[RMDB]
RNA sequence: GGGAACGACUCGAGUAGAGUCGAAAAACCGGAGCUGCGAUCUGAUUCAAGCAGACCGGCGCUCUAACGCCUUCUACUGGAAGCAUAAUCUUAUCGAUCCUCGUUUCACUCCGGUCGGAUUAUGCUAGUUUUAAAUACGCUUCGGCGUAUUUAAAACAAAAGAAACAACAACAACAAC
Reactivity to DMS in 0.01 (KOAc 150mM, MgCl2 10mM, bicine 150mM(pH8.5), 24C), signal-to-noise 2, nucleotides 027 to 126: a120c040c040g000g000a050g030c020u010g060c020g000a050u010c050u020g000a100u000u000c200a100a180g020c000a020g010a040c030c030g030g050c030g000c030u000c020u020a080a130c090g010c050c020u010u000c050u000a080c100u010g010g000a100a070g010c010a020u000a010a000u000c000u000u000a070u000c040g020a080u000c090c070u000c090g000u000u000u000c070a100c060u000c080c010g000g010u010c060g000g010a030u010u000a010u000g010c010u000a090
Reactivity to 2A3 in 0.01 (KOAc 150mM, MgCl2 10mM, bicine 150mM(pH8.5), 24C), signal-to-noise 3, nucleotides 027 to 126: a020c030c020g020g000a100g030c050u110g040c040g070a080u000c050u150g030a130u110u300c180a170a100g000c000a010g000a010c020c010g070g040c030g040c010u080c020u070a140a060c040g050c010c000u140u100c040u180a130c060u110g090g120a060a000g010c000a020u010a030a010u000c000u040u090a070u080c040g040a050u080c000c030u090c060g080u090u150u190c080a060c050u060c030c010g020g010u010c000g020g020a000u020u010a000u010g000c010u020a010